[RMDB]
RNA sequence: GGGAACGACUCGAGUAGAGUCGAAAAUGAUUCGAUCACAAUUGAAACGAAACAUUAGAAUCAAAUCAAUUCCAACUGGAAGAAAAAAUGGUGAAUAUUCAUUGAUCAAAUCAGUCACUCCACCAAAUUCAAGAGUGAGGUUCGCCUCACUCUUGAAAAAAGAAACAACAACAACAAC
Reactivity to 2A3 in 0.01 (KOAc 150mM, MgCl2 10mM, bicine 150mM(pH8.5), 24C), signal-to-noise 4, nucleotides 027 to 126: u020g000a000u000u000c010g020a020u000c010a020c050a120a110u100u110g040a040a060a080c080g040a090a040a050c060a030u070u050a080g120a120a050u170c060a050a030a150u040c030a020a140u020u000c020c000a100a140c200u250g010g010a010a000g100a060a090a050a010a020a000u050g030g010u040g060a100a020u090a090u050u040c020a010u020u020g000a010u010c070a000a010a020u000c010a000g110u070c020a020c100u030c000c000a030c010c080a050a070a060
Reactivity to DMS in 0.01 (KOAc 150mM, MgCl2 10mM, bicine 150mM(pH8.5), 24C), signal-to-noise 2, nucleotides 027 to 126: u000g000a000u000u000c020g000a000u000c000a000c300a160a020u000u020g000a060a040a080c110g040a300a100a070c050a070u000u000a030g000a080a070u010c220a020a070a130u000c100a090a190u000u030c020c000a220a060c220u140g000g000a010a010g010a000a020a110a030a060a010u010g000g000u000g000a090a060u010a040u000u020c000a010u010u010g040a010u010c010a000a020a020u000c010a000g000u050c130a040c050u010c000c010a090c140c120a030a050a090
Source information: Chemical mapping of a 177-nucleotide RNA with 2A3 and DMS. It was measured as part of the RMDB library RFM100. The 2A3 profile rests on 1,732 reads. For 2A3 the reverse transcriptase was SuperScript II with manganese. The DMS profile rests on 1,764 reads. DMS adducts were read by reverse transcription with MarathonRT. Conditions: 150 mM KOAc, 10 mM MgCl2 and 150 mM bicine (pH 8.5), 24 C. High DMS reactivity at an A or C suggests that its Watson-Crick edge is free. Reactivities are given for positions 27 through 126.